Chemical mapping of a 177-nucleotide RNA with 2A3.
2A3 adducts were read by reverse transcription with SuperScript II with manganese.
The data come from the RNA Mapping Database (RMDB), library OK1LIB.
[RMDB]
RNA sequence: GGGAACGACUCGAGUAGAGUCGAAAAACACCAGCAUCCCCAAAGAAUCUGUUCGGGCACCGAUGCUCCCCGUCAAUCAAGUGUUUGUGGAAUACUUCAACUGCCGCGGCGAGCGGGGUCAAACGUUGCAGGGUAUAGCAUUCGUGCUAUACCCUGCAAAAGAAACAACAACAACAAC
Reactivity to 2A3 in 0.01 (KOAc 150mM, MgCl2 10mM, bicine 150mM(pH8.5), 24C), signal-to-noise 1, nucleotides 027 to 126: a010c050a060c000c000a000g000c000a120u050c000c000c000c010a000a100a140g060a060a040u030c030u030g220u260u080c100g020g090g000c090a050c090c060g000a000u100g000c030u090c030c010c000c000g090u010c000a000a120u030c000a000a110g070u020g030u050u090u000g040u060g200g260a060a060u120a230c070u140u150c000a060a000c000u130g050c040c000g080c050g000g020c070g070a000g000c000g000g030g000g000u030c040a050a040a080c020g030u030u020